Chemical mapping of a 207-nucleotide RNA with 2A3 and DMS.
Values are in units of 0.01, from 0 to 300, in steps of 10.
It was measured as part of the RMDB library OK3TST.
The 2A3 profile rests on 3,217 reads.
The RNA was probed in 150 mM KOAc, 10 mM MgCl2 and 150 mM bicine (pH 8.5) at 24 C.
[RMDB]
RNA sequence: GGGAACGACUCGAGUAGAGUCGAAAACACAAAGUCCAAACCUUCUAUCCUCAGUUACAAUCUGCCGAAUGGAAGUGUGGGUAUAGUAUGCCAGCACUUUAUAAGAUACAACGUAUGUGUCUAGAACCUUGUAAUUUGUAUAAUUAUGGUGCUGGCACCAGUACGCUUACUUCGGUAAGCGUACUGGAAAAGAAACAACAACAACAAC
Reactivity to 2A3 in 0.01 (KOAc 150mM, MgCl2 10mM, bicine 150mM(pH8.5), 24C), signal-to-noise 5, nucleotides 027 to 156: c040a000c030a040a090a010g050u000c010c000a060a080a080c040c000u020u000c000u020a050u050c010c060u040c030a030g010u080u170a160c080a110a130u070c030u010g020c030c030g060a100a090u060g020g010a010a020g020u060g010u070g160g020g020u120a120u060a100g120u030a080u110g000c000c000a000g020c010a000c020u070u200u030a050u030a040a020g020a040u000a000c010a030a000c060g070u220a070u080g150u010g020u020c030u080a120g050a140a060c000c010u060u050g050u100a060a130u070u050u030g040u000a040u010a110a180u080u040a010u050g000g000u010g010c000u010g000g010c000a000
Reactivity to DMS in 0.01 (KOAc 150mM, MgCl2 10mM, bicine 150mM(pH8.5), 24C), signal-to-noise 2, nucleotides 027 to 156: c050a180c050a050a120a180g020u000c020c010a030a080a040c050c040u000u000c010u000a070u000c020c030u010c040a050g000u000u010a200c200a140a150u000c020u000g030c070c030g000a090a090u000g000g010a010a040g010u010g020u000g020g010g000u000a080u000a140g050u000a210u010g000c010c010a040g010c000a000c020u000u000u010a030u010a050a040g010a100u000a040c000a010a090c130g000u010a070u000g030u000g020u000c040u000a180g020a100a030c030c040u000u000g010u000a010a070u010u000u000g030u000a040u010a050a110u000u000a040u000g010g000u000g000c010u010g000g050c000a030